The data come from the RNA Mapping Database (RMDB), library TTRDEL. Chemical mapping of a 177-nucleotide RNA with DMS. DMS adducts were read by reverse transcription with MarathonRT. Values cover nucleotides 27 to 126. The reactions ran in a buffer of 150 mM KOAc, 10 mM MgCl2 and 150 mM bicine (pH 8.5), at 24 C.

RNA sequence: GGGAACGACUCGAGUAGAGUCGAAAAGAUAUGGAGGGAGCGUCCGUAGGAGGUGAUCGGAAACGAUCACUCCCCACCCUACCGGGACGCGAAGAACUCCUAAGUCAAACGUACCUUCGGGUACGAAGCUUAUGCUGCGGUUCGCCGCAGCAUAAGCAAAAGAAACAACAACAACAAC
Reactivity to DMS in 0.01 (KOAc 150mM, MgCl2 10mM, bicine 150mM(pH8.5), 24C), signal-to-noise 1, nucleotides 027 to 126: g040a070u060a300u000g000g000a070g000g010g000a120g040c000g060u000c000c050g000u010a000g000g010a150g020g000u000g090a010u000c000g000g000a070a120a220c040g000a000u000c000a000c000u000c060c000c010c040a300c070c000c000u000a000c050c300g040g010g000a020c000g000c010g010a000a090g000a100a080c010u000c000c000u010a010a140g000u000c020a220a090a270c010g000u000a000c000c000u000u000c270g010g000g060u000a000c000g000a140a070